RNA sequence: GGGAACGACUCGAGUAGAGUCGAAAACACCCAGCCUGUCUUGCUUAUUCUUUUUGCUUCAAACAUAUCUCUGCUCUGGCUGGAUGCGGUGCCUCACACCUAUAUUCUCAGCACUUUGGGAGGCCGACGUAAUUGUAGAAUUCGUUCUACAAUUACGAAAAGAAACAACAACAACAAC
Reactivity to 2A3 in 0.01 (KOAc 150mM, MgCl2 10mM, bicine 150mM(pH8.5), 24C), signal-to-noise 9, nucleotides 027 to 126: c060a030c000c000c000a010g040c010c030u070g030u090c030u060u090g030c010u070u060a060u180u100c030u050u110u020u070u070g040c020u050u080c040a070a140a100c030a110u150a120u080c030u000c020u090g070c010u020c020u060g060g000c000u010g020g000a010u030g010c020g010g020u030g020c010c020u080c020a060c000a010c020c010u040a060u020a070u300u010c150u020c030a010g020c030a070c060u080u090u040g040g000g010a030g030g010c020c030g040a020
Reactivity to DMS in 0.01 (KOAc 150mM, MgCl2 10mM, bicine 150mM(pH8.5), 24C), signal-to-noise 9, nucleotides 027 to 126: c170a140c020c000c010a140g010c060c030u000g010u000c040u000u000g010c040u000u000a090u000u000c030u000u000u000u010u000g010c040u000u000c070a070a090a130c110a070u010a090u010c030u000c030u000g000c030u000c040u010g010g010c020u000g010g010a050u000g020c140g010g000u000g010c060c070u010c170a140c040a060c040c020u000a180u010a190u010u000c020u010c020a060g010c070a090c100u000u010u000g010g010g010a060g000g020c060c060g010a130